This 207-nucleotide RNA was probed chemically with 2A3 and DMS. 2A3 adducts were read by reverse transcription with SuperScript II with manganese. Values cover nucleotides 27 to 156. For 2A3, 2,571 sequencing reads were counted.

RNA sequence: GGGAACGACUCGAGUAGAGUCGAAAAACGGAUGGUACGCCAUCCGACCAUUGGGUAGAAGCGUUCAAUCAGCACCGUGACGGUGCAGAUGGGAAAUUGCCCAUGAUACGCACCAUACGUGGCGCGAAAAAGCCAUCGGUGUUCGCACCGAUGGCAAGUUACUUGGAACCUUCGGGUUCCAAGUAACAAAAGAAACAACAACAACAAC
Reactivity to 2A3 in 0.01 (KOAc 150mM, MgCl2 10mM, bicine 150mM(pH8.5), 24C), signal-to-noise 3, nucleotides 027 to 156: a000c010g000g000a000u010g010g020u040a020c220g030c020c000a000u010c000c000g020a000c000c000a070u040u090g030g010g010u070a040g030a160a020g060c030g030u050u050c030a070a080u010c020a040g000c010a000c010c000g140u220g200a160c230g030g010u000g010c020a010g000a020u010g040g000g000a000a130a120u060u030g030c000c010c000a000u050g040a030u060a040c020g000c000a030c000c030a010u040a080c210g070u050g020g000c030g010c020g040a070a050a040a060a000g000c010c000a000u000c000g000g010u030g010u050u060c150g020c030a000c010c000g000a000u000g000g000c000a000a010
Reactivity to DMS in 0.01 (KOAc 150mM, MgCl2 10mM, bicine 150mM(pH8.5), 24C), signal-to-noise 1, nucleotides 027 to 156: a090c050g000g000a050u000g030g070u010a160c300g020c050c010a010u000c010c010g000a010c020c050a240u010u000g050g010g020u000a090g000a040a080g000c070g030u010u000c050a110a040u000c030a120g020c010a000c030c010g060u010g000a150c140g000g010u010g000c010a030g000a000u000g000g000g010a040a230a090u000u000g000c000c000c000a060u000g010a140u010a050c070g000c030a020c060c000a090u000a140c200g000u030g010g020c050g010c010g010a010a030a060a080a120g000c010c000a000u010c030g060g030u000g010u000u000c300g010c000a050c000c000g030a010u030g010g000c000a000a000